[RMDB]
Chemical mapping of a 177-nucleotide RNA with DMS and 2A3. 2A3 adducts were read by reverse transcription with SuperScript II with manganese. The RNA was probed in 150 mM KOAc, 10 mM MgCl2 and 150 mM bicine (pH 8.5) at 24 C.

RNA sequence: GGGAACGACUCGAGUAGAGUCGAAAAAGUAAAGACGUUUCCGACCAAAUCGAAAGUGAUGCAAUAAAAAUAGCAGAUUCGUUGCAAGACGAUUUAAACGAACAGGCAAAAGCUAUUGAAGACGAACCUACCCUUAUAUUUUCGAAUAUAAGGGUAGAAAAGAAACAACAACAACAAC
Reactivity to DMS in 0.01 (KOAc 150mM, MgCl2 10mM, bicine 150mM(pH8.5), 24C), signal-to-noise 6, nucleotides 027 to 126: a090g020u010a070a100a110g010a190c060g000u000u010u000c010c020g020a110c120c090a070a100a090u000c050g000a070a090a100g010u010g010a100u010g000c060a060a080u010a010a070a100a050a040u010a040g000c040a110g000a110u000u000c010g020u000u010g000c200a080a100g000a050c080g000a060u000u000u000a040a060a050c050g010a050a040c130a090g010g020c120a030a050a110a080g010c040u000a020u000u000g010a080a080g000a090c130g010a120a120c200
Reactivity to 2A3 in 0.01 (KOAc 150mM, MgCl2 10mM, bicine 150mM(pH8.5), 24C), signal-to-noise 4, nucleotides 027 to 126: a000g100u120a040a060a020g080a020c030g000u010u010u000c030c010g000a040c030c030a070a070a110u080c020g090a220a030a020g070u080g090a070u050g030c060a080a030u170a170a120a030a010a010u060a020g000c020a010g020a090u050u000c020g020u010u020g050c040a050a050g070a040c050g030a000u020u090u200a030a060a010c030g050a030a020c030a060g140g000c040a090a070a030a040g010c010u010a010u050u070g050a070a010g090a030c040g010a000a010c020